[RMDB]
RNA sequence: GGGAACGACUCGAGUAGAGUCGAAAAGCCCCGGGCGCAUUCCGGGUCCCGGGGCCGGGGCGCCGACGGCUGCCGACGGGAGCCCGGCACCCGCGCCCAGGCACGUCACGGCCGAGCUGCCACGCGAGGAUAUACUGGAGUUCGCUCCAGUAUAUCCAAAAGAAACAACAACAACAAC
Reactivity to 2A3 in 0.01 (KOAc 150mM, MgCl2 10mM, bicine 150mM(pH8.5), 24C), signal-to-noise 1, nucleotides 027 to 126: g020c000c010c000c030g000g000g000c100g040c040a130u170u080c090c070g160g020g010u080c030c010c020g040g080g000g000c010c010g000g000g000g050c110g000c020c000g030a120c100g000g000c040u230g060c000c070g110a120c090g030g000g040a040g040c030c050c050g020g000c030a020c030c020c010g010c060g040c020c000c000a010g050g000c030a030c090g050u060c060a030c080g030g010c030c030g050a040g020c040u060g020c020c000a100c020g040c030g050a070
Reactivity to DMS in 0.01 (KOAc 150mM, MgCl2 10mM, bicine 150mM(pH8.5), 24C), signal-to-noise 2, nucleotides 027 to 126: g000c090c010c000c050g030g010g000c150g030c090a110u000u010c120c080g000g000g010u010c020c010c020g020g010g000g030c020c000g000g010g010g000c110g020c010c000g010a090c140g020g020c010u000g030c050c010g020a070c210g020g020g010a050g000c000c010c030g000g010c050a070c000c010c030g000c110g000c010c010c020a070g010g030c120a030c100g000u010c070a110c080g010g010c060c040g010a090g020c040u010g000c010c030a070c060g020c070g000a160
The record gives the reactivity of an RNA of 177 nucleotides to 2A3 and DMS. Values cover nucleotides 27 to 126. 2A3 is a SHAPE reagent: it acylates the 2'-hydroxyl of flexible nucleotides of all four kinds. In probing experiments dimethyl sulfate is read out at A N1 and C N3, which are open when not base-paired.